Description: Source: RMDB library OK2TST, as collected in RNAgym. The record gives the reactivity of an RNA of 177 nucleotides to DMS and 2A3. Values cover nucleotides 27 to 126. The 2A3 profile rests on 2,243 reads. DMS (dimethyl sulfate) methylates the pairing face of unpaired adenines and cytosines. The reactions ran in a buffer of 150 mM KOAc, 10 mM MgCl2 and 150 mM bicine (pH 8.5), at 24 C.
RNA sequence: GGGAACGACUCGAGUAGAGUCGAAAACCUGCCUGGGGAGCCGGGCCAUGGAGCCCAGACAUGGCACGGAUUGAUAUUGUUGAGCCAGUGCAGCAGCCCCUGUGUGUCACCUGACAACGGUGACCCCCACCUGACAUGUAUUCGUACAUGUCAGGUGAAAAGAAACAACAACAACAAC
Reactivity to DMS in 0.01 (KOAc 150mM, MgCl2 10mM, bicine 150mM(pH8.5), 24C), signal-to-noise 4, nucleotides 027 to 126: c150c010u000g000c020c010u010g010g010g000g020a280g030c010c010g000g010g020c010c010a020u000g010g010a060g000c010c010c020a100g000a070c010a010u000g000g000c000a030c010g000g010a140u010u010g000a140u010a140u020u020g010u000u000g010a300g010c020c030a020g010u000g010c000a030g020c080a130g000c090c010c010c080u010g010u000g010u000g010u000c000a010c010c010u000g000a150c180a120a080c220g010g010u000g000a030c000c010c020c030
Reactivity to 2A3 in 0.01 (KOAc 150mM, MgCl2 10mM, bicine 150mM(pH8.5), 24C), signal-to-noise 2, nucleotides 027 to 126: c010c000u000g010c000c000u010g000g000g030g020a020g060c020c010g020g010g010c000c000a000u000g040g000a080g070c020c000c020a000g030a020c010a010u010g000g020c000a010c030g030g030a030u080u130g110a050u110a070u300u210g170u130u230g030a030g060c010c000a040g020u100g170c010a010g000c010a040g010c060c000c000c000u020g040u020g020u030g010u050c000a020c010c010u130g150a200c090a140a020c130g000g000u000g000a000c000c000c000c000